Source information:
The data come from the RNA Mapping Database (RMDB), library OK2TST. This 177-nucleotide RNA was probed chemically with 2A3 and DMS. The 2A3 profile rests on 1,186 reads. The RNA was probed in 150 mM KOAc, 10 mM MgCl2 and 150 mM bicine (pH 8.5) at 24 C. 2A3 adducts were read by reverse transcription with SuperScript II with manganese.

RNA sequence: GGGAACGACUCGAGUAGAGUCGAAAACCUUCAGGGACGGGCUGUGAACACCACGCUGAAUGGUGGCGAACAGUGGAUGCAUGAGGGGGCGAUAGCCACAGGAACCGUCAUUAAUGAUAAGGGCUGACACCAGUGCAGUAUUCGUACUGCACUGGUGAAAAGAAACAACAACAACAAC
Reactivity to 2A3 in 0.01 (KOAc 150mM, MgCl2 10mM, bicine 150mM(pH8.5), 24C), signal-to-noise 2, nucleotides 027 to 126: c000c000u040u060c030a070g110g010g070a000c040g030g080g000c000u000g000u040g070a050a050c020a010c000c000a020c070g080c050u040g070a070a160u120g000g000u040g000g100c060g010a050a010c030a010g010u020g080g050a030u020g040c170a100u110g160a120g060g140g000g040g020c050g030a070u170a020g000c020c000a060c020a020g020g050a040a040c000c000g030u000c000a050u090u190a080a080u070g040a000u040a100a040g070g000g040c060u010g030a010
Reactivity to DMS in 0.01 (KOAc 150mM, MgCl2 10mM, bicine 150mM(pH8.5), 24C), signal-to-noise 3, nucleotides 027 to 126: c020c000u000u010c030a090g010g000g030a050c050g010g010g040c030u000g030u010g000a170a120c030a110c010c010a010c040g030c170u000g010a090a110u000g000g010u000g000g010c060g010a130a040c080a030g050u000g010g000a140u000g030c030a080u010g030a080g000g000g000g020g040c090g000a080u010a070g040c020c020a090c070a100g000g020a060a110c030c030g020u000c020a090u010u010a060a110u020g000a080u030a040a100g000g000g000c040u000g020a190